RNA sequence: GGGAACGACUCGAGUAGAGUCGAAAAGACACCGCCGACGAGAUCGACCUGGAACCGGUGUCGCACAGUGCAUUACGCAGCCUGCUCGACACCCAGCGCAGCAUUGGCGACGUGCCGACCGGGAUCGGUACCCUACCCGGUUCGCCGGGUAGGGUACAAAAGAAACAACAACAACAAC
Reactivity to DMS in 0.01 (KOAc 150mM, MgCl2 10mM, bicine 150mM(pH8.5), 24C), signal-to-noise 1, nucleotides 027 to 126: g020a140c060a120c050c000g040c010c000g010a050c110g060a160g000a100u000c020g000a130c020c000u010g010g010a080a060c150c060g040g000u030g000u010c000g000c060a040c080a030g010u000g040c010a150u000u000a080c200g070c050a080g010c070c000u010g000c070u010c070g000a050c150a110c030c060c050a090g020c060g000c080a110g000c030a060u010u000g030g000c020g000a010c090g000u020g030c050c000g010a060c040c010g010g000g000a090u000c000g010
Reactivity to 2A3 in 0.01 (KOAc 150mM, MgCl2 10mM, bicine 150mM(pH8.5), 24C), signal-to-noise 1, nucleotides 027 to 126: g030a000c060a050c060c010g120c030c040g090a140c060g060a030g020a230u060c020g030a030c010c000u000g050g000a140a130c090c000g020g020u090g000u050c000g020c000a200c020a000g080u120g050c000a050u040u210a190c180g000c020a000g000c000c020u100g020c020u120c080g030a010c000a030c070c000c000a030g030c030g000c040a180g060c000a010u000u000g030g000c000g000a020c040g080u130g010c000c010g000a030c020c020g010g040g020a160u040c020g010

Chemical mapping of a 177-nucleotide RNA with DMS and 2A3.
For DMS, 804 sequencing reads were counted.
It was measured as part of the RMDB library OK2TRN.
Conditions: 150 mM KOAc, 10 mM MgCl2 and 150 mM bicine (pH 8.5), 24 C.